The record gives the reactivity of an RNA of 177 nucleotides to 2A3.
For 2A3 the reverse transcriptase was SuperScript II with manganese.
The 2A3 profile rests on 598 reads.
RNA sequence: GGGAACGACUCGAGUAGAGUCGAAAACUUUGGGGCCUCACGUACGGAUAUUUUGGCGGGAUGGCGCUAAUACACACGCCACGCACCGGUUCACUGACAGCAGCUGGUGAACGCUCUCUUGCUGCCACGGGUGGUCACCAUUCGUGGUGACCACCCGAAAAGAAACAACAACAACAAC
Reactivity to 2A3 in 0.01 (KOAc 150mM, MgCl2 10mM, bicine 150mM(pH8.5), 24C), signal-to-noise 1, nucleotides 027 to 126: c000u020u100u180g000g000g060g000c000c000u000c020a080c040g100u150a030c080g050g030a030u050a200u000u190u010u210g120g000c060g010g000g000a080u130g010g000c010g000c040u030a090a010u170a000c010a000c000a000c080g000c010c010a040c050g000c000a060c060c040g000g000u000u000c020a020c020u060g030a010c000a130g010c000a010g000c020u040g020g010u010g110a050a020c040g020c000u010c000u000c040u080u080g010c000u080g050c000c030a030

Source: RMDB library OK1LIB, as collected in RNAgym.